[RMDB]
Structure probing data (2A3 and DMS) for a 177-nucleotide construct.
RNA sequence: GGGAACGACUCGAGUAGAGUCGAAAAGGUGCGAUGUUCGCAUCGCACCAAAGAAGCUCAAAAUGACGCAAACAACGGGGUCAGCGUGAGCAAACGCGGAAAAAACCACUUGGUUCGCCAAGUGGAACUUAAACUUUACCUUCGGGUAAAGUUUAAGAAAAGAAACAACAACAACAAC
Reactivity to 2A3 in 0.01 (KOAc 150mM, MgCl2 10mM, bicine 150mM(pH8.5), 24C), signal-to-noise 3, nucleotides 027 to 126: g000g000u000g010c020g010a000u010g020u040u040c090g000c090a010u000c000g000c000a000c000c000a000a000a000g010a030a010g000c010u000c010a060a070a050a100u080g020a010c020g030c240a040a210a160c070a120a110c140g080g000g040g010u010c010a000g000c030g090u040g000a010g030c050a100a070a000c090g000c050g080g000a060a050a010a000a020a080c010c010a010c000u010u010g050g000u060u060c220g000c080c000a000a000g000u000g000g000a000a000
Reactivity to DMS in 0.01 (KOAc 150mM, MgCl2 10mM, bicine 150mM(pH8.5), 24C), signal-to-noise 5, nucleotides 027 to 126: g000g020u000g020c000g010a010u000g010u010u010c180g030c020a040u000c000g020c010a000c000c000a020a040a060g000a100a110g010c020u010c040a060a040a080a120u000g010a050c040g010c050a080a080a100c150a070a110c120g010g000g000g010u000c030a050g000c130g020u000g000a050g020c110a060a060a090c110g010c070g000g010a000a050a070a070a090a100c000c010a010c000u000u000g000g020u000u020c190g020c020c000a010a010g010u000g010g000a020a020
Background
For DMS the reverse transcriptase was MarathonRT. The reactions ran in a buffer of 150 mM KOAc, 10 mM MgCl2 and 150 mM bicine (pH 8.5), at 24 C. Reactivities are rounded to 0.1 and cut off at 0 and 3. For 2A3, 6,043 sequencing reads were counted. The data come from the RNA Mapping Database (RMDB), library M2PK50.